The record gives the reactivity of an RNA of 177 nucleotides to 2A3 and DMS. The 2A3 profile rests on 6,696 reads. Conditions: 150 mM KOAc, 10 mM MgCl2 and 150 mM bicine (pH 8.5), 24 C. The data come from the RNA Mapping Database (RMDB), library M2PK50.

[RMDB]
RNA sequence: GGGAACGACUCGAGUAGAGUCGAAAAGGUAUCCACUUCGGUGGAUACCAAAGGCGAUCCCAGCAUCAGGGAACAACAACUAUAGAUGCAUCCCUAACGCCAAAAUUCCGGAUUUCGAUCCGGAAAAGUCAAGCUGUAUAUUCGUAUACAGCUUGACAAAAGAAACAACAACAACAAC
Reactivity to 2A3 in 0.01 (KOAc 150mM, MgCl2 10mM, bicine 150mM(pH8.5), 24C), signal-to-noise 4, nucleotides 027 to 126: g000g010u000a000u000c000c000a000c000u040u090c210g100g000u000g000g000a000u000a000c000c000a020a020a010g010g000c010g010a050u020c020c020c010a010g040c010a030u050c010a030g010g020g140a110a100c050a040a010c010a030a060c150u090a070u120a300g020a030u030g010c020a070u030c010c000c020u040a060a030c020g000c000c000a090a040a000a050u040u000c000c000g010g010a010u020u070u150c170g050a020u040c000c000g000g000a040a030a010a000
Reactivity to DMS in 0.01 (KOAc 150mM, MgCl2 10mM, bicine 150mM(pH8.5), 24C), signal-to-noise 3, nucleotides 027 to 126: g000g000u000a000u010c000c000a000c010u010u000c230g070g020u000g010g000a000u010a010c000c000a010a000a050g020g030c020g010a190u010c030c010c020a080g000c030a010u000c040a130g010g000g010a070a100c110a070a060c270a090a100c090u010a110u030a090g010a020u000g000c030a060u000c010c010c000u010a290a180c020g000c000c040a090a080a090a200u000u000c020c000g020g000a020u000u000u000c190g000a020u000c000c000g000g000a000a000a040a050